[RMDB]
RNA sequence: GGGAACGACUCGAGUAGAGUCGAAAAACAUAUUGUGACAUAUUCGAACCAGCCAAGUUGACUAGAUACGGGAAGGACUACAAAGCAUGCGGGUAUCAAGACAGUCACGGGUUUUACAGGUCUGUCCCUGGGGCUGUAUGUUCGCAUACAGCCCCAGAAAAGAAACAACAACAACAAC
Reactivity to DMS in 0.01 (KOAc 150mM, MgCl2 10mM, bicine 150mM(pH8.5), 24C), signal-to-noise 1, nucleotides 027 to 126: a110c140a140u060a080u000u000g020u070g000a110c140a010u030a020u000u000c050g000a110a120c030c000a070g000c000c080a090a110g000u000u000g050a140c170u000a090g000a100u020a110c080g000g020g110a050a110g000g020a070c130u080a020c160a070a170a040g010c110a110u000g000c010g000g000g000u030a000u000c040a070a060g000a020c220a070g030u020c060a080c000g010g000g020u000u030u000u000a020c080a030g000g000u010c060u000g000u040c130c050
Reactivity to 2A3 in 0.01 (KOAc 150mM, MgCl2 10mM, bicine 150mM(pH8.5), 24C), signal-to-noise 2, nucleotides 027 to 126: a010c080a000u220a060u220u130g060u030g070a020c060a040u120a010u120u060c080g030a040a060c000c000a010g000c000c010a100a000g060u070u000g010a050c000u040a070g050a070u140a090c020g090g020g010a010a020g060g020a050c000u080a040c070a070a020a000g040c000a000u160g090c070g020g110g000u040a100u070c010a070a090g060a060c000a000g050u010c030a040c120g010g000g000u000u010u020u180a070c170a030g020g010u000c000u010g130u060c110c090